[RMDB]
RNA sequence: GGGAACGACUCGAGUAGAGUCGAAAAGAUAUGGAAGUAUUACGCUUGCGGUAUGAAUGCGACGAUCUACCACUCGGAAACGAGUGUGUAGGGAGCAUGUACCGCAAGCGUAAUACUUCCUAAGUCAUCACCUAAGAAUCUUCGGAUUCUUAGGUGAAAAAGAAACAACAACAACAAC
Reactivity to DMS in 0.01 (KOAc 150mM, MgCl2 10mM, bicine 150mM(pH8.5), 24C), signal-to-noise 2, nucleotides 027 to 126: g000a040u010a300u000g010g000a010a000g020u000a000u000u000a000c000g000c000u000u000g010c000g010g010u000a010u000g030a110a020u010g000c030g020a100c300g000a010u020c000u000a000c000c010a000c000u000c000g020g020a120a120a290c010g010a010g020u000g000u000g010u000a000g000g000g020a040g010c000a020u010g020u010a010c000c000g010c000a000a010g000c000g020u000a000a010u000a010c000u000u000c000c000u000a020a060g000u000c030a220
Description
Chemical mapping of a 177-nucleotide RNA with DMS. For DMS the reverse transcriptase was MarathonRT. Source: RMDB library TTRINS, as collected in RNAgym. The DMS profile rests on 3,392 reads.